Annotation
This 177-nucleotide RNA was probed chemically with DMS and 2A3. For DMS, 1,305 sequencing reads were counted.

[RMDB]
RNA sequence: GGGAACGACUCGAGUAGAGUCGAAAAUACUCGUCCGUGGAUGUGUCCGGUAACGUCAACAGUGGUAAAGAGAAUGAAAAUGCAGAUGACGAUAUGGAUUCUCUGUUUGGUGAUGAAGACGAAGACACAGGCAUGGAGUAUUCGUACUCCAUGCCUGAAAAGAAACAACAACAACAAC
Reactivity to DMS in 0.01 (KOAc 150mM, MgCl2 10mM, bicine 150mM(pH8.5), 24C), signal-to-noise 2, nucleotides 027 to 126: u010a120c070u000c040g010u010c030c130g010u010g010g020a090u010g020u010g010u000c030c040g000g000u030a050a150c070g010u010c010a050a090c080a060g020u000g000g000u000a050a110a100g000a030g020a040a010u030g010a050a070a240a120u000g000c020a060g000a140u000g020a030c030g030a090u000a100u010g010g010a080u000u020c000u000c000u000g000u010u010u000g000g000u000g010a070u010g020a080a140g010a060c040g000a130a100g000a100c100a050
Reactivity to 2A3 in 0.01 (KOAc 150mM, MgCl2 10mM, bicine 150mM(pH8.5), 24C), signal-to-noise 1, nucleotides 027 to 126: u040a000c000u000c030g030u000c010c010g070u070g000g000a060u150g040u000g010u000c010c000g000g050u160a110a020c030g050u010c010a030a030c000a110g110u070g050g000u170a140a060a000g090a010g050a050a010u130g090a090a120a040a000u240g050c030a000g000a210u070g010a060c070g030a040u040a090u120g080g010a040u010u010c030u000c000u040g100u050u180u040g040g010u010g040a070u090g070a020a000g110a000c090g000a030a030g010a010c070a000
High 2A3 reactivity points to a flexible backbone, as in loops and unpaired stretches. For 2A3, 764 sequencing reads were counted.